The record gives the reactivity of an RNA of 177 nucleotides to DMS and 2A3. For 2A3, 3,406 sequencing reads were counted.
RNA sequence: GGGAACGACUCGAGUAGAGUCGAAAAGCGCCCCUUUUCGAAGGGGCGCACUGGAAAUAAAGCCCAAAGGCUAGGCAUUCCUUAUUUGGCGAAAGCCUGCCACUAUUGAGAUCUUCGGAUCUCAAAACAGACAGUUAGGAUUCGUCCUAACUGUCUGAAAAGAAACAACAACAACAAC
Reactivity to DMS in 0.01 (KOAc 150mM, MgCl2 10mM, bicine 150mM(pH8.5), 24C), signal-to-noise 2, nucleotides 027 to 126: g020c010g020c000c000c000c000u000u000u000u040c180g020a020a000g030g010g000g030c000g000c010a000c040u000g000g020a080a110a110u010a090a160a100g000c010c010c010a110a090a070g010g010c010u040a030g000g010c000a120u000u000c010c020u000u000a160u010u010u030g010g010c110g000a010a080a070g010c000c000u000g010c010c000a150c290u000a130u000u010g010a000g010a000u000c000u000u010c210g010g010a010u000c000u000c000a010a010a040a210
Reactivity to 2A3 in 0.01 (KOAc 150mM, MgCl2 10mM, bicine 150mM(pH8.5), 24C), signal-to-noise 4, nucleotides 027 to 126: g000c020g020c000c000c010c000u020u060u000u040c170g090a010a010g020g020g020g000c020g010c020a000c000u010g050g120a030a130a100u170a060a120a030g050c010c020c000a040a110a020g060g030c110u170a010g010g010c010a030u030u070c010c000u120u150a300u210u250u230g050g000c130g020a010a010a000g000c000c000u000g000c000c020a030c020u110a210u050u060g000a000g000a010u020c010u040u060c230g080g000a000u000c000u000c000a000a020a000a000
2A3 adducts were read by reverse transcription with SuperScript II with manganese.